[RMDB]
RNA sequence: GGGAACGACUCGAGUAGAGUCGAAAAAUAAACAUCUUUGGCUUUAUGGCUUGCUUGAACCUUAAAGGAGUUGAACUAACUGGUGACUCCCAUGAUUAGUCAUUAGAGUACAAAGUACGGCCGUGAACUGCAUAAUGGCAUUCGUGCCAUUAUGCAGAAAAGAAACAACAACAACAAC
Reactivity to DMS in 0.01 (KOAc 150mM, MgCl2 10mM, bicine 150mM(pH8.5), 24C), signal-to-noise 1, nucleotides 027 to 126: a130u050a120a180a180c080a100u010c010u010u000u000g010g020c060u000u000u000a030u010g010g010c020u010u010g000c030u020u000g000a180a070c110c070u000u000a040a110a110g000g000a020g000u000u010g000a060a100c230u010a090a110c220u010g010g000u000g010a030c010u000c030c010c010a060u010g000a200u000u000a050g000u000c020a000u000u000a020g000a020g040u000a140c030a010a020a010g000u040a120c160g030g020c050c050g000u000g020a110a120
Reactivity to 2A3 in 0.01 (KOAc 150mM, MgCl2 10mM, bicine 150mM(pH8.5), 24C), signal-to-noise 1, nucleotides 027 to 126: a000u120a040a120a000c000a140u030c000u040u010u030g010g020c010u000u030u040a000u030g000g000c000u040u010g000c000u050u020g020a190a270c000c040u030u090a140a060a010g000g010a020g000u010u020g110a060a000c040u040a090a030c060u190g020g000u030g000a010c000u000c000c000c000a000u030g120a240u030u060a010g030u000c040a020u050u150a020g000a010g000u050a300c000a000a000a020g000u060a030c090g050g000c020c030g140u120g050a080a040
Structure probing data (DMS and 2A3) for a 177-nucleotide construct.
The reactions ran in a buffer of 150 mM KOAc, 10 mM MgCl2 and 150 mM bicine (pH 8.5), at 24 C.
For 2A3, 945 sequencing reads were counted.
Reactivities are rounded to 0.1 and cut off at 0 and 3.
For DMS the reverse transcriptase was MarathonRT.